An RNA of 307 nucleotides, treated with DMS and read out base by base. Conditions: 150 mM KOAc, 10 mM MgCl2 and 150 mM bicine (pH 8.5), 24 C. Source: RMDB library POS240, as collected in RNAgym.

RNA sequence: GGGAACGACUCGAGUAGAGUCGAAAAGAAGUAUGCUUAGAACUAUGUCGAAAGAUGGAGUACGAAGUUGACGAAAAAGUCAACGAAGUACGACAUCGAAAGACAUAGUUCUAAGCAUACAAGCUCUGUGAUGGAGCCCAUGCGUGUCAUCUGAGCCUCUGGCUUCCCUGCCAGUGCAGCCCUGGCAGUGUCCUACUUCCCAGGGCUGUUGUCUGCCUGGCGGGAAGGUCCUGGGCAAAGGAUCAGUCUUUGUACUCUGAGAGCAAAGGAUCCAGUUCGCUGGAUCCAAAAGAAACAACAACAACAAC
Reactivity to DMS in 0.01 (KOAc 150mM, MgCl2 10mM, bicine 150mM(pH8.5), 24C), signal-to-noise 5, nucleotides 027 to 266: g020a120a160g000u010a010u020g000c000u000u000a000g000a010a010c000u000a000u000g010u000c000g000a150a140a200g010a010u000g020g000a220g020u000a020c000g000a150a300g010u010u000g000a020c030g050a080a090a140a130a150g020u010c000a000a000c000g000a080a300g000u000a010c000g010a120c010a000u000c000g010a050a110a200g000a000c010a000u000a010g000u000u000c000u000a000a000g000c010a000u000a000c000a070a160g010c010u000c000u000g020u020g000a100u010g000g000a040g020c110c140c050a060u010g000c060g010u000g010u000c100a030u020c040u000g000a300g000c030c020u000c130u000g000g000c010u000u000c010c000c010u000g030c000c000a010g000u000g010c010a010g000c010c030c010u000g000g000c300a020g010u000g010u020c110c110u010a190c010u000u000c210c000c000a020g000g000g000c070u000g000u010u000g000u010c100u010g000c130c010u000g010g000c010g000g000g010a010a010g000g000u010c000c030u000g000g010g010c030a000a060a100g000g000a020u000c060a090g000u010c050u000u010u010g010u000a110c040u000c040u000g010a060g000a040g010c040a100a130a130